[RMDB]
RNA sequence: GGGAACGACUCGAGUAGAGUCGAAAACGAUAAGCAUUCGUGCUUAUCGACGGUACGAAAGUACAAAGGAGCAAAAGCAUGGGCUCCUAAAAACGAUGCAAAAGACAACGGGGUUCGCCCCGUUGAAUUCAGAGGAUUUAUUCGUAAAUCCUCUGAAAAAAGAAACAACAACAACAAC
Reactivity to 2A3 in 0.01 (KOAc 150mM, MgCl2 10mM, bicine 150mM(pH8.5), 24C), signal-to-noise 2, nucleotides 027 to 126: c000g000a010u010a020a000g010c000a010u030u120c200g070u020g000c000u000u000a000u010c000g000a010c040g080g000u000a010c010g050a130a060a040g010u000a000c030a020a210a050g000g000a000g010c020a090a070a120a020g020c010a040u100g030g190g000c000u000c000c010u030a020a000a000a000a010c020g010a020u030g020c010a000a010a160a050g080a090c000a010a000c010g010g020g000g000u020u050c170g080c000c000c020c010g000u000u000g010a000a010
Reactivity to DMS in 0.01 (KOAc 150mM, MgCl2 10mM, bicine 150mM(pH8.5), 24C), signal-to-noise 4, nucleotides 027 to 126: c020g010a010u000a000a000g010c010a020u000u010c220g010u000g010c000u000u010a000u000c010g010a070c240g010g000u000a010c010g010a150a100a120g020u000a010c010a080a120a170g000g000a000g020c000a100a080a090a100g010c050a030u000g000g010g000c000u000c000c000u000a010a010a020a030a020c030g010a020u000g000c040a080a070a110a100g010a180c010a010a010c010g010g000g010g020u000u000c240g010c000c000c000c000g010u000u000g010a050a100